[RMDB]
RNA sequence: GGGAACGACUCGAGUAGAGUCGAAAAGCACGAACCGGAUUAGAUACCCGGGUAGUCCUAGCCGUAAACGAUGCCCGCUAGGUGUCACGACGGUCGUGAAUCGUCGUGGUGCCGUAGGGAAGCCGCGACUGGAGCGUAAUUUCGAUUACGCUCCAGUAAAAGAAACAACAACAACAAC
Reactivity to DMS in 0.01 (KOAc 150mM, MgCl2 10mM, bicine 150mM(pH8.5), 24C), signal-to-noise 3, nucleotides 027 to 126: g030c220a040c030g000a120a250c020c000g000g030a020u000u020a160g000a120u030a080c110c000c010g000g010g000u020a120g030u000c050c030u020a050g010c040c050g010u010a050a100a150c090g000a100u020g020c030c020c020g000c130u010a300g000g000u000g010u010c020a010c000g010a020c010g000g010u000c030g020u030g030a110a000u000c020g010u000c000g010u000g000g000u000g000c030c010g000u020a140g000g000g010a070a050g010c040c050g020c100g010
Reactivity to 2A3 in 0.01 (KOAc 150mM, MgCl2 10mM, bicine 150mM(pH8.5), 24C), signal-to-noise 4, nucleotides 027 to 126: g060c030a010c030g010a130a040c020c000g000g000a010u030u110a110g050a120u140a090c000c020c000g020g020g010u030a000g010u000c020c010u060a040g020c010c000g070u090a000a080a030c040g030a020u130g030c000c010c000g000c050u040a060g030g000u000g020u010c010a020c010g000a000c000g000g030u040c060g130u090g140a260a010u020c010g000u000c000g000u000g000g000u000g000c010c000g000u010a000g000g010g010a000a010g010c000c010g040c020g080

An RNA of 177 nucleotides, treated with DMS and 2A3 and read out base by base. Source: RMDB libraries RFM100 and RFMREP, as collected in RNAgym. For 2A3 the reverse transcriptase was SuperScript II with manganese.